Chemical mapping of a 177-nucleotide RNA with 2A3 and DMS. The 2A3 profile rests on 6,421 reads. The DMS profile rests on 10,851 reads. Conditions: 150 mM KOAc, 10 mM MgCl2 and 150 mM bicine (pH 8.5), 24 C. The data come from the RNA Mapping Database (RMDB), library OK2TST. Reactivities are given for positions 27 through 126. 2A3 adducts were read by reverse transcription with SuperScript II with manganese.
[RMDB]
RNA sequence: GGGAACGACUCGAGUAGAGUCGAAAACUUGUUGACUACCAAGGAUUUACCGAUGGAUGCGCUUCUACUAAUCAAUAAGCCCGAUAAUGUGCGAUUAUCUUUGCGCGCGCGGUGCAUACAGUUGACACUCUCACAAAAUAUUCGUAUUUUGUGAGAGAAAAGAAACAACAACAACAAC
Reactivity to 2A3 in 0.01 (KOAc 150mM, MgCl2 10mM, bicine 150mM(pH8.5), 24C), signal-to-noise 6, nucleotides 027 to 126: c020u040u070g010u040u070g040a020c010u050a040c060c060a090a070g090g020a090u090u080u110a080c010c030g050a090u160g090g060a090u040g010c020g020c030u030u050c010u060a090c030u030a050a040u040c030a010a140u100a210a050g030c020c030c030g060a090u150a280a110u220g060u040g020c020g020a020u060u030a060u090c020u060u090u090g010c010g010c000g000c010g010c000g000g020u040g030c010a040u060a080c040a020g020u010u020g050a010c000a010
Reactivity to DMS in 0.01 (KOAc 150mM, MgCl2 10mM, bicine 150mM(pH8.5), 24C), signal-to-noise 8, nucleotides 027 to 126: c040u000u000g010u000u000g000a070c040u010a180c160c080a090a140g010g010a150u010u010u010a060c030c010g000a100u010g010g000a080u000g010c040g010c010u000u000c060u010a090c140u000a040a060u000c050a060a090u010a100a160g000c020c040c050g000a080u010a040a080u010g010u000g020c070g000a060u000u000a080u000c090u000u000u010g000c030g020c040g000c040g010c050g000g010u000g010c100a060u000a060c130a050g010u000u000g020a090c130a140